[RMDB]
RNA sequence: GGGAACGACUCGAGUAGAGUCGAAAAAACACUGUGGCCUGAUUGUUCGACAUCAACAAUGAAAGUGAUCUAAGCAGGAAAAUCAGUCUUUCCUAAGGUCCAAGAAAGCCAUUUGGUGUUGAUGUGGGACGAGCGUAAAUUUCGAUUUACGCUCGUCAAAAGAAACAACAACAACAAC
Reactivity to DMS in 0.01 (KOAc 150mM, MgCl2 10mM, bicine 150mM(pH8.5), 24C), signal-to-noise 2, nucleotides 027 to 126: a040a010c050a040c040u000g010u000g030g010c000c010u000g040a040u000u000g010u000u000c090g020a100c090a110u020c040a040a030c070a040a120u000g000a070a090a080g010u000g000a020u000c000u000a170a050g050c240a000g010g010a010a000a070a080u000c130a080g000u000c110u000u000u000c000c000u020a110a070g010g040u000c000c010a080a070g020a100a050a150g000c060c000a030u000u010u000g030g000u000g000u000u000g020a070u000g000u020g020g010
Reactivity to 2A3 in 0.01 (KOAc 150mM, MgCl2 10mM, bicine 150mM(pH8.5), 24C), signal-to-noise 1, nucleotides 027 to 126: a000a000c070a020c010u060g030u050g110g000c030c000u050g070a140u020u040g020u050u020c060g080a050c070a120u090c040a010a000c020a020a040u100g050a210a040a010g140u180g070a010u010c030u100a030a070g220c050a000g150g000a040a000a000a040u150c040a000g210u020c030u040u000u000c000c000u010a060a020g000g030u000c000c020a050a000g040a160a030a000g010c000c020a070u080u090u200g000g010u010g000u000u020g030a050u090g030u110g050g060